[RMDB]
RNA sequence: GGGAACGACUCGAGUAGAGUCGAAAAAAUGUGAGCAAUAUGUCAACAGAUUCCUCACUGUGUGUACAUUGCGAUCCUAUGCAUAGAUUUUUCACGUUAAGUAACAAAUUAGGGUUUAAGAAGCACAGGAGGAUGGAUAGUUCGCUAUCCAUCCUCCAAAAGAAACAACAACAACAAC
Reactivity to 2A3 in 0.01 (KOAc 150mM, MgCl2 10mM, bicine 150mM(pH8.5), 24C), signal-to-noise 2, nucleotides 027 to 126: a030a050u150g020u020g010a100g040c020a010a110u010a090u280g090u130c060a040a020c000a060g020a100u080u080c020c010u060c020a080c010u010g020u000g010u010g050u070a010c010a120u030u060g000c000g010a020u030c020c030u050a020u010g000c020a090u060a110g100a180u110u090u030u100u300c010a000c150g030u050u140a130a120g080u070a110a050c040a060a080a040u040u010a030g070g000g000u050u030u040a120a170g030a140a020g000c030a020c000a020
Reactivity to DMS in 0.01 (KOAc 150mM, MgCl2 10mM, bicine 150mM(pH8.5), 24C), signal-to-noise 1, nucleotides 027 to 126: a040a070u000g020u000g010a120g020c040a110a100u010a080u020g000u000c080a020a050c020a020g000a110u000u000c060c040u020c070a180c020u000g000u000g000u010g010u010a030c070a000u020u000g020c050g000a050u000c010c020u000a000u010g020c110a070u000a130g020a120u000u000u000u000u000c010a060c050g050u000u020a060a150g020u000a070a050c150a010a020a070u000u000a020g000g000g000u000u000u000a100a080g020a100a170g000c020a010c110a100